[RMDB]
RNA sequence: GGGAACGACUCGAGUAGAGUCGAAAAAGGACCAGUUACCUCGUAAAUACAUCUGGAAACCAAUAGUCGCAAACGACGAAAACUACGCUCUAGCCGCUUAAAUCCGGCUGGACUCCGCACCGGUGGGCCUCAACGCCGGGUCUGGCAACAGACAGCGCAGGAGAACGACGUUCGCGUCGUUCUCCUGAAAAGAAACAACAACAACAAC
Reactivity to 2A3 in 0.01 (KOAc 150mM, MgCl2 10mM, bicine 150mM(pH8.5), 24C), signal-to-noise 2, nucleotides 027 to 156: a000g050g020a180c030c040a020g050u060u130a060c000c070u060c080g130u090a060a170a000u190a060c070a100u030c030u040g010g000a080a070a060c000c010a040a080u020a140g030u040c020g020c060a020a050a040c040g070a000c000g010a020a040a010a030c080u110a040c090g020c030u000c000u000a010g010c020c000g040c020u040u180a080a090a030u070c020c000g000g000c000u010g000g000a020c010u000c000c020g050c000a020c030c020g010g000u010g020g050g010c020c020u080c050a050a050c020g000c000c000g000g010g020u020c000u000g000g000c020a040a020c000a050g030a000c000a020g000c020g000
Reactivity to DMS in 0.01 (KOAc 150mM, MgCl2 10mM, bicine 150mM(pH8.5), 24C), signal-to-noise 2, nucleotides 027 to 156: a030g010g010a110c030c060a220g030u010u000a060c090c050u030c070g020u000a090a090a150u000a060c020a100u010c020u020g060g030a180a080a120c030c100a090a150u000a180g000u000c010g020c020a070a070a060c000g030a110c000g010a060a060a080a100c040u010a040c020g000c030u000c020u010a090g020c000c000g040c070u000u010a120a090a060u000c060c020g030g040c010u000g010g020a120c060u000c050c020g030c090a210c080c050g000g010u000g020g000g010c010c070u000c050a110a080c000g050c010c020g010g010g020u000c000u030g010g000c130a110a240c040a060g010a030c000a090g030c000g010
Source information:
Chemical mapping of a 207-nucleotide RNA with 2A3 and DMS. Reactivities are rounded to 0.1 and cut off at 0 and 3. Values cover nucleotides 27 to 156. For DMS, 2,525 sequencing reads were counted. High DMS reactivity at an A or C suggests that its Watson-Crick edge is free. 2A3 adducts were read by reverse transcription with SuperScript II with manganese.